[RMDB]
RNA sequence: GGGAACGACUCGAGUAGAGUCGAAAAACCUUUGUGACCUGGGAGCCUCCCUGGACGAGGUUCCACCCAUUGGGUGGAACUCCCCACCGUCCACCAGGCGAAGAACAGGUCACUCUGGUAAAAUCACAUUAUUUCUGUUCGCAGAAAUAAUGUGAAACAAACAGAUUGCGUUCGCGCAAUCUGUUUGAAAAGAAACAACAACAACAAC
Reactivity to 2A3 in 0.01 (KOAc 150mM, MgCl2 10mM, bicine 150mM(pH8.5), 24C), signal-to-noise 1, nucleotides 027 to 156: a010c000c020u000u000u020g000u000g000a010c010c000u010g020g000g040a010g000c010c000u000c020c010c010u010g000g000a010c010g010a020g000g020u000u010c000c010a010c090c020c060a300u270u300g010g000g010u010g000g020a010a010c010u060c050c000c010c010a060c000c020g000u020c000c000a020c070c180a000g010g000c010g020a140a010g040a040a010c010a010g000g000u000c000a000c000u000c020u000g000g020u040a120a040a010a160u040c000a000c000a010u040u000a000u000u020u000c000u000g080u050u100c290g020c080a000g000a010a000a000u020a000a000u020g000u010g000a000a000a000